Conditions: 150 mM KOAc, 10 mM MgCl2 and 150 mM bicine (pH 8.5), 24 C. An RNA of 177 nucleotides, treated with DMS and 2A3 and read out base by base. For DMS the reverse transcriptase was MarathonRT.
RNA sequence: GGGAACGACUCGAGUAGAGUCGAAAACAUUAAGAUAGCCGCGCAAUAAACCAGACAUAAAGGCAUCACCAGCCCCCAAUACAUUGAGAACUUCAACGCGAACACCAGAAUGGAGUUUGACCUGUUCGAGAAAGUAAUGAUUCGUCAUUACUUUCUCAAAAGAAACAACAACAACAAC
Reactivity to DMS in 0.01 (KOAc 150mM, MgCl2 10mM, bicine 150mM(pH8.5), 24C), signal-to-noise 6, nucleotides 027 to 126: c050a090u020u010a110a080g010a170u010a100g020c040c060g030c120g010c050a080a060u010a060a100a080c060c040a050g000a090c100a050u000a050a060a080g010g000c030a030u000c040a050c030c040a080g000c030c030c010c030c040a070a060u000a060c070a050u000u000g010a150g010a040a040c050u010u000c050a020a070c120g000c050g010a060a050c050a050c090c060a080g000a070a080u000g010g010a070g010u000u000u000g010a160c160c080u000g010u000u000c120
Reactivity to 2A3 in 0.01 (KOAc 150mM, MgCl2 10mM, bicine 150mM(pH8.5), 24C), signal-to-noise 4, nucleotides 027 to 126: c010a030u110u160a130a030g050a140u050a040g040c050c040g030c020g000c080a040a100u090a180a100a040c040c020a020g050a060c020a050u150a050a150a000g050g010c000a010u030c000a030c010c000a020g050c000c010c000c010c030a020a040u100a050c010a020u040u070g040a030g000a050a010c000u010u020c010a020a010c010g010c000g070a020a010c030a030c080c000a010g040a060a030u090g010g000a030g010u020u000u010g020a010c010c000u050g030u060u090c020

For 2A3 the reverse transcriptase was SuperScript II with manganese.